RNA sequence: GGGAACGACUCGAGUAGAGUCGAAAACAUAUGACGGAGAGUGGAACACUCAGCGGAAACGCAUGCAAUGUCUGAAGUCUUUAAUGGGUAUAACAGUCAGUUGACCCAGAUCCCAACAGACAAUAAACAUAACGGAGAUCUUCGGAUCUCCGUUAUGAAAAGAAACAACAACAACAAC
Reactivity to DMS in 0.01 (KOAc 150mM, MgCl2 10mM, bicine 150mM(pH8.5), 24C), signal-to-noise 2, nucleotides 027 to 126: c100a160u010a050u030g010a090c060g000g000a090g010a050g010u000g020g000a100a150c110a050c030u000c020a130g020c050g040g000a040a090a110c060g000c020a080u000g020c120a150a090u000g000u000c000u010g000a070a050g000u000c060u010u000u000a150a150u000g000g010g030u000a040u000a010a010c020a160g000u000c220a120g000u010u000g010a010c010c000c010a020g000a130u000c000c000c000a080a160c040a020g000a000c030a040a020u000a100a070a130
Reactivity to 2A3 in 0.01 (KOAc 150mM, MgCl2 10mM, bicine 150mM(pH8.5), 24C), signal-to-noise 2, nucleotides 027 to 126: c010a050u070a070u210g030a030c080g090g010a000g010a030g050u080g050g200a160a020c050a010c040u020c020a020g030c010g000g080a110a060a010c020g010c020a000u130g010c050a050a140u030g020u040c020u000g050a090a020g000u010c020u040u100u050a080a060u020g030g000g020u040a110u050a300a030c020a020g300u230c020a020g000u110u010g000a010c000c000c000a000g000a020u000c040c020c010a010a020c000a000g020a020c030a020a060u160a090a110a010